[RMDB]
RNA sequence: GGGAACGACUCGAGUAGAGUCGAAAAGAAGCACGGCUUGUGUGUGAUCCUUUUGGAUUGCACUGUAUAUCCUACGCUGUGCGAAGGUAGGACCAUUGUGGCGAGAGCCACUUACAGUACAGCUUAUUAUGACGCAUCGCUGUACGAACGAUGCCGAAUUUAUGAUCCGGUUCGCCGGAUCAUAAAUAAAAGAAACAACAACAACAAC
Reactivity to 2A3 in 0.01 (KOAc 150mM, MgCl2 10mM, bicine 150mM(pH8.5), 24C), signal-to-noise 6, nucleotides 027 to 156: g080a050a000g010c010a000c030g020g000c040u160u130g040u010g000u000g000u020g110a000u020c020c000u110u240u160u300g020g000a010u000u010g000c000a000c000u000g090u040a160u020a020u130c030c030u020a050c110g000c020u030g020u050g020c010g020a030a010g030g010u060a020g000g040a020c030c040a120u020u100g000u000g000g000c010g010a060g000a020g010c010c000a000c000u000u050a030c020a010g000u000a000c000a000g000c010u100u050a050u160u170a140u300g200a080c120g040c140a060u100c070g000c020u020g020u030a010c010g010a040a010c040g010a030u050g010c010c000g020a020
Reactivity to DMS in 0.01 (KOAc 150mM, MgCl2 10mM, bicine 150mM(pH8.5), 24C), signal-to-noise 4, nucleotides 027 to 156: g010a160a180g010c020a040c010g020g010c030u000u010g010u020g040u000g010u000g000a030u000c010c000u000u010u000u000g060g030a040u000u000g000c000a010c010u000g010u000a130u000a150u000c080c040u000a080c110g030c010u000g040u000g030c020g010a060a040g020g000u000a050g000g000a240c050c060a180u000u010g040u000g000g040c020g030a300g000a300g030c010c010a010c010u000u000a050c070a100g040u000a050c030a090g000c040u000u000a190u000u010a140u000g030a210c110g010c040a050u000c050g020c010u000g030u000a130c130g010a060a020c010g000a040u000g030c000c020g020a130
This 207-nucleotide RNA was probed chemically with 2A3 and DMS. Reactivities are given for positions 27 through 156. DMS (dimethyl sulfate) methylates the pairing face of unpaired adenines and cytosines. The data come from the RNA Mapping Database (RMDB), library OK3TST. For 2A3, 4,642 sequencing reads were counted. For 2A3 the reverse transcriptase was SuperScript II with manganese.